This 177-nucleotide RNA was probed chemically with 2A3 and DMS. DMS adducts were read by reverse transcription with MarathonRT. Conditions: 150 mM KOAc, 10 mM MgCl2 and 150 mM bicine (pH 8.5), 24 C. The 2A3 profile rests on 1,710 reads. Source: RMDB library RFMREP, as collected in RNAgym.
[RMDB]
RNA sequence: GGGAACGACUCGAGUAGAGUCGAAAAGUCAGGCUACCGGGAGCGGCAGCGCUCAGCGGCAGAUCGGCAACCGCGCCGUCCAGCGAGGGAAGCAUCUGGCUAGUGGCCAGUCCUUCCGGCGUAAUAACUAGUGAAGUUACUUCGGUAACUUCACUAGAAAAGAAACAACAACAACAAC
Reactivity to 2A3 in 0.01 (KOAc 150mM, MgCl2 10mM, bicine 150mM(pH8.5), 24C), signal-to-noise 1, nucleotides 027 to 126: g010u000c040a040g050g160c010u030a030c000c030g010g030g000a000g000c030g080g020c040a030g140c030g020c040u030c040a040g080c000g050g000c000a010g030a090u080c060g000g000c040a090a020c000c020g000c000g000c010c020g060u030c020c030a050g010c040g060a060g000g010g000a020a020g000c040a050u070c000u030g020g030c000u000a030g130u130g230g010c020c010a000g020u030c000c000u030u010c000c000g080g000c010g010u030a070a140u140a070a160
Reactivity to DMS in 0.01 (KOAc 150mM, MgCl2 10mM, bicine 150mM(pH8.5), 24C), signal-to-noise 2, nucleotides 027 to 126: g020u000c070a060g030g010c000u000a030c060c010g000g010g010a030g010c060g000g020c240a090g000c020g030c010u010c020a040g020c030g030g000c030a030g010a060u000c050g010g000c020a110a170c080c060g000c050g010c020c040g000u010c060c070a120g010c030g010a090g000g020g000a060a100g010c160a080u010c000u000g000g000c010u010a110g010u000g030g000c000c000a030g000u000c290c010u000u000c010c010g000g010c040g020u010a070a090u010a090a210